[RMDB]
RNA sequence: GGGAACGACUCGAGUAGAGUCGAAAAGAAGGUAUAUGAAAGUCGAAUAACUCAUCGAGCUGAGCGUUCACCACAAUGCUUUGUUCCUUCUGUCCGGCCAGCUUAUGGCGUUCAGACAGAAGGUAAAUAGGUAUAUAUCAUUCGUGAUAUAUACCUAAAAAGAAACAACAACAACAAC
Reactivity to 2A3 in 0.01 (KOAc 150mM, MgCl2 10mM, bicine 150mM(pH8.5), 24C), signal-to-noise 9, nucleotides 027 to 126: g060a030a030g140g060u190a150u050a080u300g120a130a060a030g070u050c020g030a100a060u120a140a050c010u000c030a040u040c060g020a010g040c080u080g090a030g060c020g010u010u020c120a180c260c010a020c040a040a080u130g040c040u070u080u110g080u110u070c000c000u010u000c000u000g010u000c010c030g040g000c010c000a020g030c060u300u190a080u200g010g000c010g050u150u130c010a010g000a000c000a000g000a000a000g010g000u000a010a000a010
Reactivity to DMS in 0.01 (KOAc 150mM, MgCl2 10mM, bicine 150mM(pH8.5), 24C), signal-to-noise 9, nucleotides 027 to 126: g010a150a070g010g020u010a070u010a090u010g010a120a140a120g010u000c050g010a110a080u010a110a140c040u000c020a080u000c050g010a060g010c300u000g010a070g010c050g000u000u000c020a110c030c020a120c290a070a060u010g010c080u000u000u000g010u010u000c000c000u000u000c000u000g010u000c010c060g000g000c010c010a040g010c290u010u010a080u000g010g000c010g010u010u010c100a070g000a020c000a010g000a020a010g010g010u000a000a050a100
The record gives the reactivity of an RNA of 177 nucleotides to 2A3 and DMS. For 2A3 the reverse transcriptase was SuperScript II with manganese. The data come from the RNA Mapping Database (RMDB), library OK2TST. Conditions: 150 mM KOAc, 10 mM MgCl2 and 150 mM bicine (pH 8.5), 24 C.